This 177-nucleotide RNA was probed chemically with 2A3 and DMS.
The RNA was probed in 150 mM KOAc, 10 mM MgCl2 and 150 mM bicine (pH 8.5) at 24 C.
Source: RMDB library OK2TRN, as collected in RNAgym.
[RMDB]
RNA sequence: GGGAACGACUCGAGUAGAGUCGAAAAGAGGAUUCAACGAGCUUCGUAGCAACGAUAGCAACGUAGCUUUUGCUACGACCCCAGCUAUCGAGGGAAGCUACGUCCCGUGCUCGAGGGGAGAAUCCGACCAUCGGUAGGUCUUCGGACCUACCGAUGGAAAAGAAACAACAACAACAAC
Reactivity to 2A3 in 0.01 (KOAc 150mM, MgCl2 10mM, bicine 150mM(pH8.5), 24C), signal-to-noise 1, nucleotides 027 to 126: g110a040g000g000a000u050u000c010a080a040c040g030a020g030c010u100u060c060g070u050a000g020c000a100a070c010g010a010u010a010g000c000a040a030c000g010u000a000g000c050u090u190u140u300g000c010u020a020c010g230a190c010c000c000c030a020g000c010u010a010u010c000g040a100g080g110g030a140a000g030c040u030a010c010g030u010c010c070c030g060u040g000c000u020c010g010a070g000g060g000g000a120g010a000a000u010c000c010g040a060
Reactivity to DMS in 0.01 (KOAc 150mM, MgCl2 10mM, bicine 150mM(pH8.5), 24C), signal-to-noise 1, nucleotides 027 to 126: g020a130g000g000a000u000u000c000a120a180c050g010a130g000c090u000u010c020g000u010a040g080c010a160a240c040g010a010u000a010g000c000a170a120c020g060u000a030g000c000u000u010u010u000g010c010u000a000c000g070a150c130c070c060c130a070g000c010u000a030u000c010g000a110g010g010g030a100a150g010c010u020a010c170g010u000c050c090c050g010u020g050c010u000c000g000a050g000g010g010g010a200g000a040a000u000c000c000g010a110
For DMS, 918 sequencing reads were counted.